[RMDB]
RNA sequence: GGGAACGACUCGAGUAGAGUCGAAAAGAUCUGAGCCGAUCCGAAACGCUAGCAAACAGCCCGCAUCAUGUCGUCUCCUAACUUCGACGUGGUGAAAUACUGAGCUUAUGCGAGUAAGCCUGUUAGCAAUAGAUCAGAACGUUCGCGUUCUGAUCAACAAUUUGUCCAACUUCGGUUGGACAAAUUGAAAAGAAACAACAACAACAAC
Reactivity to DMS in 0.01 (KOAc 150mM, MgCl2 10mM, bicine 150mM(pH8.5), 24C), signal-to-noise 2, nucleotides 027 to 156: g000a070u000c040u000g000a050g040c050c020g000a080u000c020c020g010a030a070a110c080g020c010u000a040g030c000a080a100a170c090a110g000c020c010c020g030c030a050u000c020a060u020g030u010c030g010u000c080u000c080c040u000a030a070c080u000u000c020g010a070c000g040u000g040g010u000g000a050a070a150u000a100c070u010g020a110g030c000u000u000a100u030g010c130g020a150g020u000a050a080g020c050c050u000g010u000u000a120g040c040a120a130u000a090g010a010u000c000a020g000a030a010c020g020u000u000c300g020c050g040u010u000c000u000g000a000u000c000a000a090
Reactivity to 2A3 in 0.01 (KOAc 150mM, MgCl2 10mM, bicine 150mM(pH8.5), 24C), signal-to-noise 4, nucleotides 027 to 156: g030a040u010c050u090g050a000g040c010c030g040a040u020c020c020g070a060a120a020c070g010c040u040a010g010c030a070a020a060c020a050g020c020c010c010g010c020a010u000c000a010u020g020u000c000g000u030c060u080c050c060u140a160a220c060u050u010c010g000a010c000g010u000g020g010u030g020a080a000a010u150a040c040u040g040a030g010c000u010u020a010u090g050c020g010a060g060u000a020a000g000c000c030u060g020u070u070a000g040c040a070a090u050a190g000a000u000c000a000g000a000a000c000g010u050u080c210g000c010g110u000u000c030u000g000a000u000c000a010a000